[RMDB]
RNA sequence: GGGAACGACUCGAGUAGAGUCGAAAAGAUUGCCGGCCGCGCCCUGGACCUGCGGGCCCCAUUGAAGCCUGGUCCAGCGACCGGUGCGGUGCUUGAAGUAUUGCGCAGCAAGGUUGCAGGCCCCGGCACCGAUAUAGGCAUUCGUGCCUAUAUCGGUAAAAGAAACAACAACAACAAC
Reactivity to DMS in 0.01 (KOAc 150mM, MgCl2 10mM, bicine 150mM(pH8.5), 24C), signal-to-noise 3, nucleotides 027 to 126: g000a140u030u010g000c000c000g020g000c130c050g000c140g000c040c030c090u000g000g020a020c010c020u010g020c190g010g010g000c010c030c030c170a130u020u030g010a150a160g010c000c040u000g000g000u000c000c010a100g000c100g000a020c010c000g010g020u000g010c000g000g010u000g010c010u000u000g000a150a120g020u000a090u000u000g010c000g040c080a090g010c030a120a130g010g010u000u000g010c050a110g010g010c020c080c000c020g000g000c040
Reactivity to 2A3 in 0.01 (KOAc 150mM, MgCl2 10mM, bicine 150mM(pH8.5), 24C), signal-to-noise 2, nucleotides 027 to 126: g030a080u110u110g010c040c010g000g040c040c010g090c000g000c030c010c050u010g000g010a020c000c020u030g070c260g010g020g000c000c000c000c040a230u100u280g050a110a010g010c000c080u040g000g010u000c000c010a010g040c010g050a020c040c020g020g070u000g020c000g000g050u000g010c010u070u160g140a210a020g070u100a050u100u090g020c090g020c070a050g030c030a080a070g050g010u050u060g040c020a020g000g010c010c020c020c010g030g000c010

The data come from the RNA Mapping Database (RMDB), library OK2TST. The record gives the reactivity of an RNA of 177 nucleotides to DMS and 2A3. 2A3 adducts were read by reverse transcription with SuperScript II with manganese. DMS adducts were read by reverse transcription with MarathonRT. The DMS profile rests on 3,245 reads. The 2A3 profile rests on 1,588 reads. The reactions ran in a buffer of 150 mM KOAc, 10 mM MgCl2 and 150 mM bicine (pH 8.5), at 24 C. Reactivities are given for positions 27 through 126.